[RMDB]
RNA sequence: GGGAACGACUCGAGUAGAGUCGAAAACUCCACGCUGUGUAAUGGACGACGGCGGCGUGUGGCGAACAGGGAUACCGGUAGUCAGUGUCUGGAACAUCCCAAGGGGCGGCGGAGCUAGCACCCCGACAAAACGGGCACAAGUUCGCUUGUGCCCGAACAGAUAGAAUCCGUUCGCGGAUUCUAUCUGAAAAGAAACAACAACAACAAC
Reactivity to 2A3 in 0.01 (KOAc 150mM, MgCl2 10mM, bicine 150mM(pH8.5), 24C), signal-to-noise 3, nucleotides 027 to 156: c040u050c020c000a000c010g000c010u010g010u010g050u150a140a120u130g080g020a060c040g000a010c030g100g010c010g000g000c010g000u050g020u060g060g040c050g020a070a050c070a110g040g000g010a020u060a110c000c030g040g030u060a050g060u050c080a040g050u020g030u110c040u040g010g020a050a050c020a100u040c000c010c000a030a050g010g010g010g000c050g020g030c050g040g070a050g060c030u050a020g000c010a050c030c000c000c000g020a020c050a000a080a020a040c020g010g000g000c000a000c000a000a010g010u030u090c180g010c160u010u000g000u000g000c000c000c000g000a000a010
Reactivity to DMS in 0.01 (KOAc 150mM, MgCl2 10mM, bicine 150mM(pH8.5), 24C), signal-to-noise 1, nucleotides 027 to 156: c040u050c050c020a030c010g000c010u000g050u030g010u000a100a090u010g010g000a070c090g000a100c010g010g010c020g000g050c040g000u010g010u010g010g010c020g020a080a070c070a120g000g050g000a110u010a090c000c060g040g020u000a140g000u000c060a110g010u010g040u000c000u000g030g010a090a140c070a110u000c000c010c010a210a170g020g030g000g030c070g010g000c010g010g000a090g060c040u000a120g020c020a090c020c000c000c010g000a090c150a050a030a120a200c020g010g010g010c000a030c010a000a060g030u000u010c300g000c030u020u000g020u000g020c000c020c000g020a000a050